[RMDB]
RNA sequence: GGGAACGACUCGAGUAGAGUCGAAAAUUGUACACACCGCCCGUCACGUCAUGGGAGCCGAGGGUGCCCGAAGCCGCCACGAUUCAGUGGUGUCCACGGCAAGAUCGGUGACUGGGACGAAGUCGUAACCCAGUCAACGGUUCGCCGUUGACUGGGUAAAAGAAACAACAACAACAAC
Reactivity to DMS in 0.01 (KOAc 150mM, MgCl2 10mM, bicine 150mM(pH8.5), 24C), signal-to-noise 1, nucleotides 027 to 126: u000u000g020u010a090c130a090c080a150c090c100g000c080c040c000g000u000c150a130c040g030u000c010a040u000g030g010g030a230g010c030c000g000a020g000g000g060u000g000c020c000c000g000a250a270g000c030c000g030c010c060a020c000g000a210u030u030c250a030g000u010g020g030u000g000u000c000c020a300c300g000g020c000a000a010g110a050u030c030g000g030u000g000a150c020u000g010g010g000a030c000g010a040a080g050u010c110g000u000a050